[RMDB]
RNA sequence: GGGAACGACUCGAGUAGAGUCGAAAAGAUAUGGAUUCUGGAGACAUGUCGCUCGGUUCGGAAACGAACCACGCGAGCGACAACAGCUCCUGAAUCCUAAGUCAAAAGAUCGCGUUCGCGCGAUCAACAGGCAGAGUAAGUUCGCUUACUCUGCCUGAAAAGAAACAACAACAACAAC
Reactivity to 2A3 in 0.01 (KOAc 150mM, MgCl2 10mM, bicine 150mM(pH8.5), 24C), signal-to-noise 2, nucleotides 027 to 126: g030a020u050a060u170g000g010a000u000u010c010u060g040g000a030g000a040c100a130u180g020u010c010g020c010u050c090g040g000u020u020c000g030g080a030a040a020c020g000a010a010c040c010a030c110g300c180g020a010g010c000g040a000c010a000a010c030a010g030c020u000c000c000u000g020a000a020u010c000c000u010a080a020g050u000c040a110a000a050a130g000a000u000c020g000c000g070u090u130c300g000c000g000c000g170a010u000c000a010a000
Reactivity to DMS in 0.01 (KOAc 150mM, MgCl2 10mM, bicine 150mM(pH8.5), 24C), signal-to-noise 2, nucleotides 027 to 126: g010a080u000a300u010g000g000a010u000u000c010u000g010g000a060g050a030c150a230u010g010u000c010g010c000u000c000g010g020u000u000c060g000g000a060a150a260c010g000a000a010c020c040a100c250g030c300g000a020g030c030g000a030c000a040a060c300a050g000c010u000c000c000u000g000a010a010u000c010c000u000a030a070g000u000c010a140a170a120a120g000a000u000c000g010c010g010u010u040c180g020c000g010c000g000a000u010c000a040a120
Structure probing data (2A3 and DMS) for a 177-nucleotide construct.
For 2A3 the reverse transcriptase was SuperScript II with manganese.
For DMS, 1,205 sequencing reads were counted.